The record gives the reactivity of an RNA of 177 nucleotides to 2A3 and DMS.
Conditions: 150 mM KOAc, 10 mM MgCl2 and 150 mM bicine (pH 8.5), 24 C.
Source: RMDB library 15KREP, as collected in RNAgym.

RNA sequence: GGGAACGACUCGAGUAGAGUCGAAAAAGGCAAUCUUGCUACUAAUCACGAUCGUUAUUGCUCUGUCCAUCAAGGAGCUCAUGUGGCUUCUAAUGAUGCAAUAAUGACUCGUUGUUUAGCUAUUCAUCUAUCCUAUCUUCUUCGGAAGAUAGGAUAGAAAAGAAACAACAACAACAAC
Reactivity to 2A3 in 0.01 (KOAc 150mM, MgCl2 10mM, bicine 150mM(pH8.5), 24C), signal-to-noise 8, nucleotides 027 to 126: a000g080g000c060a050a120u090c120u160u120g010c010u030a040c010u010a010a010u020c000a000c010g000a000u000c000g000u010u000a010u010u000g000c000u000c060u130g150u050c080c010a040u060c040a040a030g010g000a010g020c000u010c040a150u250g180u230g040g000c000u010u000c010u010a040a080u070g030a020u100g000c010a000a010u010a010a000u010g010a010c070u000c010g020u030u090g010u010u000u000a010g000c020u110a160u060u090c040a050u020
Reactivity to DMS in 0.01 (KOAc 150mM, MgCl2 10mM, bicine 150mM(pH8.5), 24C), signal-to-noise 3, nucleotides 027 to 126: a050g000g000c030a050a120u000c170u030u000g020c030u000a150c000u000a010a000u000c030a000c000g020a010u000c000g020u000u000a000u010u000g010c020u000c140u010g000u010c190c120a070u000c130a110a100g000g020a000g010c000u000c050a140u000g010u010g010g010c000u000u000c000u000a130a040u000g000a080u000g000c000a010a010u000a010a000u000g000a010c230u000c000g010u000u000g010u000u000u000a010g000c170u010a110u000u000c120a100u000